Annotation: The record gives the reactivity of an RNA of 177 nucleotides to 2A3. The 2A3 profile rests on 329 reads. The RNA was probed in 150 mM KOAc, 10 mM MgCl2 and 150 mM bicine (pH 8.5) at 24 C.
RNA sequence: GGGAACGACUCGAGUAGAGUCGAAAAUUUGAACUAUCAACAAGUGCUCUGCUAGGAAUUCUGUUGAUUAAAUAAGUAGCAGUUAAUACUGCUUCGCCCCAAAAGCUUUUAUCUAGCUUUGCACCACAUACGCGGAGUGGUUCGCCACUCCGCGUAUAAAAGAAACAACAACAACAAC
Reactivity to 2A3 in 0.01 (KOAc 150mM, MgCl2 10mM, bicine 150mM(pH8.5), 24C), signal-to-noise 1, nucleotides 027 to 126: u090u030u120g010a050a070c020u040a080u190c020a000a070c000a240a000g000u000g020c000u000c000u000g000c010u070a060g050g120a110a230u220u060c000u040g040u070u070g020a050u070u180a150a000a100u300a300a040g000u020a000g000c000a000g010u150u220a240a050u170a110c000u020g000c020u050u010c010g070c000c120c000c000a000a000a000a220g020c050u000u070u140u190a130u100c050u000a000g000c000u000u000u020g000c000a110c020c070a150c000